[RMDB]
RNA sequence: GGGAACGACUCGAGUAGAGUCGAAAAGAUAUGGAUAGGGUAGCAAGCGCUGCAUCGGAAACGAUGCAAGCGUGAUGACCUACAUUAUCCUAAGUCAAAGGGAUGAUAUAGUUCGCUAUAUCAUCCCGUUUUGACAGAUCUUCGGAUCUGUCAAAACAAAAGAAACAACAACAACAAC
Reactivity to 2A3 in 0.01 (KOAc 150mM, MgCl2 10mM, bicine 150mM(pH8.5), 24C), signal-to-noise 2, nucleotides 027 to 126: g000a000u000a000u040g000g010a010u010a010g200g040g040u000a010g020c070a170a020g000c030g010c010u000g000c000a000u000c000g010g010a010a000a000c000g000a000u000g000c010a020a010g000c000g000u010g020a070u030g000a000c010c000u000a000c000a020u000u030a010u000c010c000u000a000a010g000u000c050a090a220a170g000g000g000a000u000g010a000u000a000u000a010g040u070u080c300g010c160u000a000u000a010u000c000a000u020c000c000c010
Reactivity to DMS in 0.01 (KOAc 150mM, MgCl2 10mM, bicine 150mM(pH8.5), 24C), signal-to-noise 4, nucleotides 027 to 126: g010a010u000a010u010g000g000a020u000a010g000g010g020u000a010g020c030a060a020g020c010g010c000u000g000c000a010u000c000g020g010a010a010a010c000g010a010u000g000c000a000a020g020c000g050u000g010a060u020g000a040c300c000u000a000c000a070u010u000a010u000c000c000u000a010a140g000u000c010a090a130a200g000g000g010a020u000g000a010u000a000u000a000g010u000u010c270g020c000u000a000u000a000u000c000a000u000c000c000c000